[RMDB]
RNA sequence: GGGAACGACUCGAGUAGAGUCGAAAAUACCGUCUUCUCCCCGACGGUUUCAAUCCAUAGCUUCACGUUGUGUAGCGUAGGUGGAAGGUAUCGUAUGGUGUAUAAACACCACAUAGUCUCUUAGGGGUCAAGCUGAUAAACUUCGGUUUAUCAGCAACCAUUGUGUUUCGUUCGCGAAACACAAUGGAAAAGAAACAACAACAACAAC
Reactivity to 2A3 in 0.01 (KOAc 150mM, MgCl2 10mM, bicine 150mM(pH8.5), 24C), signal-to-noise 6, nucleotides 027 to 156: u070a020c000c000g020u010c020u180u050c050u130c000c000c000c000g000a010c010g010g000u010u030u060c030a030a050u010c000c010a030u040a090g010c010u040u070c010a030c060g300u260u260g010u080g030u060a010g010c030g060u100a080g020g090u020g010g030a040a040g050g040u080a060u130c080g040u110a070u100g000g000u000g030u010a080u110a220a200a040c010a000c050c010a010c030a010u100a030g040u020c010u000c000u120u210a020g000g010g000g020u040c060a070a010g000c000u000g000a000u000a000a000a000c000u050u070c170g070g000u000u000u000a000u000c000a000g000c000a000a000
Reactivity to DMS in 0.01 (KOAc 150mM, MgCl2 10mM, bicine 150mM(pH8.5), 24C), signal-to-noise 2, nucleotides 027 to 156: u000a050c050c010g010u000c020u000u000c050u000c020c030c020c130g000a030c030g010g010u010u000u020c060a070a130u000c010c010a050u010a180g020c030u000u000c020a020c040g010u010u000g050u010g040u000a030g040c020g010u020a050g030g010u000g000g010a070a060g010g010u000a080u000c130g030u010a020u000g010g020u000g010u000a220u020a120a170a080c000a020c020c000a020c030a050u000a120g020u000c020u010c040u000u000a300g010g000g010g020u000c020a070a180g010c010u000g000a020u010a010a010a010c000u000u000c300g040g000u000u000u000a000u000c000a000g010c010a010a010

Source: RMDB library M2RFPK, as collected in RNAgym. The record gives the reactivity of an RNA of 207 nucleotides to 2A3 and DMS. For DMS, 4,565 sequencing reads were counted. 2A3 adducts were read by reverse transcription with SuperScript II with manganese.